[RMDB]
About this RNA: The data come from the RNA Mapping Database (RMDB), library RFMREP. Structure probing data (2A3 and DMS) for a 177-nucleotide construct.
RNA sequence: GGGAACGACUCGAGUAGAGUCGAAAAGAAAGAACGAUUUUCGGCUGGAGAUGACAGCGCGGUUUUUGAGGACGUCUUUUGUCCGUGCGGUACCGCCCUCCUUGGUCGGCUCCGCCUACUCGGCGGUACCUUAUUGAGGCUUCGGCCUCAAUAAGGUAAAAGAAACAACAACAACAAC
Reactivity to 2A3 in 0.01 (KOAc 150mM, MgCl2 10mM, bicine 150mM(pH8.5), 24C), signal-to-noise 1, nucleotides 027 to 126: g080a030a140a000g090a080a060c100g010a050u000u050u040u090c020g010g000c020u030g070g010a040g000a060u060g000a040c030a030g090c020g000c100g040g040u050u050u020u140u250g070a060g020g030a010c040g110u140c100u050u270u040u070g000u000c010c000g000u060g030c020g070g040u050a000c000c010g000c000c000c020u010c030c070u090u160g020g000u000c020g020g000c000u040c010c000g030c010c000u010a050c040u020c020g010g010c010g030g010u000
Reactivity to DMS in 0.01 (KOAc 150mM, MgCl2 10mM, bicine 150mM(pH8.5), 24C), signal-to-noise 2, nucleotides 027 to 126: g020a110a090a110g010a110a150c150g000a120u000u000u010u000c040g020g000c010u010g030g020a060g020a080u000g010a050c060a100g020c130g020c000g010g000u000u010u000u010u010g020a140g000g000a020c060g030u000c120u000u000u030u010g010u000c010c000g000u000g020c070g000g000u000a020c020c000g000c030c020c080u000c100c080u000u000g020g020u000c010g010g000c040u000c010c010g020c250c010u000a040c060u010c040g010g000c000g000g010u000
Conditions: 150 mM KOAc, 10 mM MgCl2 and 150 mM bicine (pH 8.5), 24 C.